An RNA of 177 nucleotides, treated with 2A3 and DMS and read out base by base.
2A3 adducts were read by reverse transcription with SuperScript II with manganese.
The reactions ran in a buffer of 150 mM KOAc, 10 mM MgCl2 and 150 mM bicine (pH 8.5), at 24 C.

RNA sequence: GGGAACGACUCGAGUAGAGUCGAAAAAUAAAGCGAAGUUUGAAAAUGGUCAAUGGUUCAUUCAAGGUCGUAUUGAUUUCCAAAUCAAAUUGAAUGGCUACAGAAUGGAAUUAGAAGAAAUUGAAACUAGCGAAACCUAAUUCGUUAGGUUUCGCUAAAAAGAAACAACAACAACAAC
Reactivity to 2A3 in 0.01 (KOAc 150mM, MgCl2 10mM, bicine 150mM(pH8.5), 24C), signal-to-noise 2, nucleotides 027 to 126: a000u150a090a000a000g120c050g090a090a000g000u120u260u130g080a210a110a030a150u150g000g030u120c020a000a060u100g030g050u050u000c000a000u040u030c120a150a140g050g000u010c000g050u160a210u030u000g010a010u080u010u000c120c030a000a190a000u050c000a030a030a030u230u170g060a020a000u010g010g000c000u090a000c050a120g000a030a000u120g000g000a000a000u260u170a190g140a220a050g020a140a100a070u160u160g030a060a060a050c000
Reactivity to DMS in 0.01 (KOAc 150mM, MgCl2 10mM, bicine 150mM(pH8.5), 24C), signal-to-noise 2, nucleotides 027 to 126: a010u010a060a130a130g020c050g000a070a100g000u020u000u010g060a020a050a000a030u020g000g000u020c040a030a030u010g000g000u000u000c010a000u000u000c000a060a130g000g000u010c000g000u020a110u000u010g010a030u000u000u110c150c160a020a070a040u050c010a000a050a120u070u030g000a090a050u030g000g000c000u000a040c280a300g000a020a000u000g000g000a000a010u010u050a020g010a030a120g010a060a060a080u010u000g000a060a000a060c190